[RMDB]
RNA sequence: GGGAACGACUCGAGUAGAGUCGAAAAGAUAUGGAACAGGUAUAGCUCUUUGAUCGUACGUCGGAAACGACGUACGGGAGAGCAGUACUGUUCCUAAGUCAAACAUGAGAACUUCGGUUCUCAUGAAUCUUGAUGUACGGUUCGCCGUACAUCAAGAAAAAGAAACAACAACAACAAC
Reactivity to 2A3 in 0.01 (KOAc 150mM, MgCl2 10mM, bicine 150mM(pH8.5), 24C), signal-to-noise 2, nucleotides 027 to 126: g000a010u020a000u050g010g000a000a010c010a030g050g060u160a160u250a300g030c000u060c000u300u300u020g010a040u000c000g020u010a000c000g020u000c000g000g000a010a010a000c000g000a000c020g000u000a010c000g010g000g000a020g000a000g040c000a020g000u100a090c000u010g000u000u000c010c010u000a020a010g020u000c030a100a050a110c000a010u000g010a030g000a010a000c020u080u150c300g130g000u000u000c000u000c000a000u000g000a000a150
Reactivity to DMS in 0.01 (KOAc 150mM, MgCl2 10mM, bicine 150mM(pH8.5), 24C), signal-to-noise 2, nucleotides 027 to 126: g010a030u000a070u020g000g000a000a000c010a030g000g020u010a200u010a210g030c000u000c010u030u000u030g000a080u010c000g010u000a000c000g000u000c010g010g010a020a020a070c000g010a010c000g000u000a010c000g000g000g000a000g010a020g040c000a190g010u020a100c000u000g010u000u000c000c000u010a000a090g000u010c010a160a110a280c010a000u000g000a020g010a010a000c000u000u000c190g020g010u000u000c000u000c000a000u000g000a080a140